This 177-nucleotide RNA was probed chemically with DMS.
It was measured as part of the RMDB library OK2TST.
For DMS, 924 sequencing reads were counted.
RNA sequence: GGGAACGACUCGAGUAGAGUCGAAAAACACAGAGGCCGCCAUCGAUCUGGAGACUCUCCAGAACUCGUUCCGGGAGGUGGCCGAGCAGGCGCUUCCGAUCGUCACGGAGAUCAGCGUGGUGGAGACAUCAUGGCAGUUUUUCGAAACUGCCAUGAUAAAAGAAACAACAACAACAAC
Reactivity to DMS in 0.01 (KOAc 150mM, MgCl2 10mM, bicine 150mM(pH8.5), 24C), signal-to-noise 1, nucleotides 027 to 126: a130c120a150c110a170g050a170g010g020c030c000g000c030c030a060u000c030g000a060u000c000u000g000g000a100g020a180c090u010c020u000c020c000a020g000a090a080c120u000c010g000u000u000c030c020g020g000g000a060g000g010u020g000g010c020c000g010a070g000c230a130g020g000c040g000c000u030u000c020c020g030a030u010c040g000u050c050a160c100g020g000a080g010a030u000c060a030g010c000g060u000g020g010u000g010g000a090g000a140c140